[RMDB]
RNA sequence: GGGAACGACUCGAGUAGAGUCGAAAAGUGUGAAAAGGGGCAGAGGCAGGGCACAGUGCACAGCAUUUCCCAAACUUAUUUGUCAUGCAUGCUUUUCACAUGCAGUAUCUCAAGACACCUGUUUUCCAACAAAUGCUGCUAUAUUCUAUCAGGGAGACCUUCACGUCAUAUUCGUAUGACGUGAAGGAAAAGAAACAACAACAACAAC
Reactivity to DMS in 0.01 (KOAc 150mM, MgCl2 10mM, bicine 150mM(pH8.5), 24C), signal-to-noise 2, nucleotides 027 to 156: g000u010g000u020g000a030a060a100a100g000g010g030g000c040a110g030a120g040g020c030a060g010g050g040c050a090c090a070g000u000g000c070a160c000a110g020c070a130u000u010u000c020c010c020a100a050a100c130u010u000a100u000u000u030g010u010c020a100u000g020c010a030u000g000c020u000u000u000u000c160a000c000a020u000g010c030a110g000u000a050u000c050u000c060a080a140g020a120c050a080c030c010u010g020u000u000u000u000c040c010a030a160c100a080a060a110u000g020c000u000g040c050u020a140u010a100u000u000c070u000a070u020c080a070g020g000g010a130g000a140
Reactivity to 2A3 in 0.01 (KOAc 150mM, MgCl2 10mM, bicine 150mM(pH8.5), 24C), signal-to-noise 5, nucleotides 027 to 156: g030u030g000u030g040a010a020a020a030g040g020g010g010c060a030g030a060g060g000c050a010g020g020g020c030a030c030a050g040u040g020c030a040c020a170g020c020a030u030u020u040c000c010c010a040a100a040c120u130u100a120u130u090u100g070u090c040a030u040g010c010a010u030g060c030u090u070u070u100c060a020c000a010u030g000c000a000g010u060a100u020c090u010c040a060a030g040a020c050a050c050c010u010g020u010u040u050u000c040c010a050a040c040a050a110a030u060g020c000u010g000c010u050a060u010a010u260u070c060u050a100u080c010a040g050g000g020a040g040a050